[RMDB]
RNA sequence: GGGAACGACUCGAGUAGAGUCGAAAAUGUAUGACCCCACAGCUACAGAUGCAAAGCAACACCACAGACACGGAUAUGAAAAGCCUGAAGAAUUGUGGACUGCCAAAAGCCGUGUGCACCCAUUGUAGAUGCAUGCACUAUUCGUAGUGCAUGCAUCAAAAGAAACAACAACAACAAC
Reactivity to 2A3 in 0.01 (KOAc 150mM, MgCl2 10mM, bicine 150mM(pH8.5), 24C), signal-to-noise 2, nucleotides 027 to 126: u110g070u070a110u090g100a070c010c020c000c000a040c010a050g060c010u090a060c010a000g070a090u070g110c000a070a000a000g020c000a000a000c020a010c000c030a040c000a050g040a010c010a040c100g070g000a010u030a060u170g130a010a160a040a040g040c030c030u100g030a090a080g070a100a120u120u060g030u020g000g010a030c020u040g060c020c040a110a090a000a000g000c010c010g040u020g010u010g010c010a030c000c030c010a070u070u230g100u010a060
Reactivity to DMS in 0.01 (KOAc 150mM, MgCl2 10mM, bicine 150mM(pH8.5), 24C), signal-to-noise 2, nucleotides 027 to 126: u060g010u000a050u010g000a210c080c010c050c060a110c100a120g020c030u000a130c070a070g020a110u000g010c020a090a090a130g000c050a030a040c040a030c020c000a070c040a070g000a120c100a060c060g010g000a080u000a190u000g000a050a130a090a100g010c010c020u000g000a120a090g000a070a030u000u000g010u010g000g000a090c070u000g000c080c060a040a030a060a160g030c010c010g010u000g040u010g000c090a140c020c020c020a080u000u010g000u000a120